Structure probing data (2A3 and DMS) for a 177-nucleotide construct.
DMS adducts were read by reverse transcription with MarathonRT.
The DMS profile rests on 7,126 reads.
As a SHAPE reagent, 2A3 marks flexible, mostly unpaired nucleotides at the ribose 2'-OH.

RNA sequence: GGGAACGACUCGAGUAGAGUCGAAAAAUACGCGUGAGAAAUUUCUCUAUCUCAUCAUGUCUGAGGGCAAGGCGGUGCGCUACGGCAUUGGUGUUGGCCGCCGUGGCUUUGAAUGGUCUGGCACGGACACGUAAAUCAGGUUCGCCUGAUUUACGUGAAAAGAAACAACAACAACAAC
Reactivity to 2A3 in 0.01 (KOAc 150mM, MgCl2 10mM, bicine 150mM(pH8.5), 24C), signal-to-noise 2, nucleotides 027 to 126: a000u150a040c080g030c040g040u050g010a040g030a020a090a060u040u120u010c040u000c010u030a060u000c040u040c010a060u000c020a030u120g050u030c030u010g020a080g010g040g040c040a040a050g040g000c020g000g030u080g040c030g000c000u010a020c030g020g020c050a090u060u190g030g000u100g110u140u190g140g010c000c020g000c000c000g020u010g030g010c000u010u140u080g080a100a060u090g060g010u020c040u010g010g000c020a030c080g010g000a010
Reactivity to DMS in 0.01 (KOAc 150mM, MgCl2 10mM, bicine 150mM(pH8.5), 24C), signal-to-noise 5, nucleotides 027 to 126: a060u010a090c160g010c170g020u010g010a050g000a050a080a120u000u000u000c010u010c030u000a250u000c020u000c020a040u010c070a060u010g010u000c050u000g000a100g010g010g010c060a080a060g010g010c040g020g020u000g020c090g020c030u010a030c040g010g010c030a130u000u010g010g020u000g000u000u010g000g000c030c040g010c010c020g020u000g010g000c010u000u000u000g010a070a090u010g000g010u010c020u000g000g010c050a060c070g000g000a210